[RMDB]
RNA sequence: GGGAACGACUCGAGUAGAGUCGAAAAGAACGCACUGAUGCCCUGACGCUGCUUCAUUACGGAGCUGUGUCCGGGGCCCCGGUGGAUUUCGAUCCGCCGGAGGGGUGGCCCUCCACCUCGACUCCAGAAUCAGUUCCAAUUUCGAUUGGAACUGAUUAAAAGAAACAACAACAACAAC
Reactivity to DMS in 0.01 (KOAc 150mM, MgCl2 10mM, bicine 150mM(pH8.5), 24C), signal-to-noise 5, nucleotides 027 to 126: g010a050a080c160g010c110a080c110u010g000a100u000g020c000c000c010u000g000a030c000g000c010u000g020c000u000u010c010a190u030u050a200c250g010g010a010g000c010u000g010u000g010u010c040c080g020g010g000g010c000c130c010c000g020g020u010g000g010a010u000u000u020c150g010a020u000c020c010g000c000c000g000g010a030g000g010g000g010u000g000g010c080c060c200u020c040c020a020c010c010u000c010g000a120c060u010c070c080a170g010
Reactivity to 2A3 in 0.01 (KOAc 150mM, MgCl2 10mM, bicine 150mM(pH8.5), 24C), signal-to-noise 9, nucleotides 027 to 126: g060a070a040c060g030c110a040c110u140g030a100u210g030c010c000c000u010g000a000c010g000c010u030g010c000u020u010c020a190u140u300a080c220g000g010a000g000c010u010g010u010g000u010c060c110g000g000g000g000c000c010c010c000g000g000u010g010g000a010u040u060u150c180g060a010u000c000c000g000c000c000g010g000a030g000g000g000g010u000g000g010c020c000c010u080c010c000a010c000c000u010c010g040a070c030u040c060c050a040g110
An RNA of 177 nucleotides, treated with DMS and 2A3 and read out base by base.
The reactions ran in a buffer of 150 mM KOAc, 10 mM MgCl2 and 150 mM bicine (pH 8.5), at 24 C.
2A3 adducts were read by reverse transcription with SuperScript II with manganese.